[RMDB]
RNA sequence: GGGAACGACUCGAGUAGAGUCGAAAAGAAUUGUACGGAAAUCUGAAAGCUGUGGCAGCAUGCCCAAGCCAGCUUGUUACCAAGCACACAGUCCAAGGAAAGUGUAGACUUUUCGAGAUCUACCUGAUCACCUUAUGUUGUUCGCAACAUAAGGUGAAAAAGAAACAACAACAACAAC
Reactivity to DMS in 0.01 (KOAc 150mM, MgCl2 10mM, bicine 150mM(pH8.5), 24C), signal-to-noise 4, nucleotides 027 to 126: g000a160a080u010u010g010u010a100c100g000g020a100a090a070u010c050u010g000a040a110a130g010c020u000g010u000g000g040c200a100g010c060a060u000g000c030c030c050a100a090g000c080c080a070g030c040u000u000g010u010u020a100c140c050a030a050g030c030a210c090a040c040a020g010u000c020c040a080a280g010g000a020a050a050g010u020g030u010a110g000a070c010u000u000u000u000c030g010a060g000a080u000c020u010a110c000c030u000g000a170
Reactivity to 2A3 in 0.01 (KOAc 150mM, MgCl2 10mM, bicine 150mM(pH8.5), 24C), signal-to-noise 2, nucleotides 027 to 126: g030a030a130u150u060g030u060a020c050g020g080a120a060a090u040c040u100g110a150a020a020g010c010u010g010u040g080g040c020a030g020c030a060u140g000c000c010c010a000a030g030c000c010a000g030c020u030u000g010u020u110a120c110c050a030a030g020c020a000c000a000c010a050g030u020c030c020a040a010g090g010a140a080a020g120u080g030u080a040g040a070c000u030u010u040u030c020g000a020g010a140u000c010u020a030c000c000u020g010a070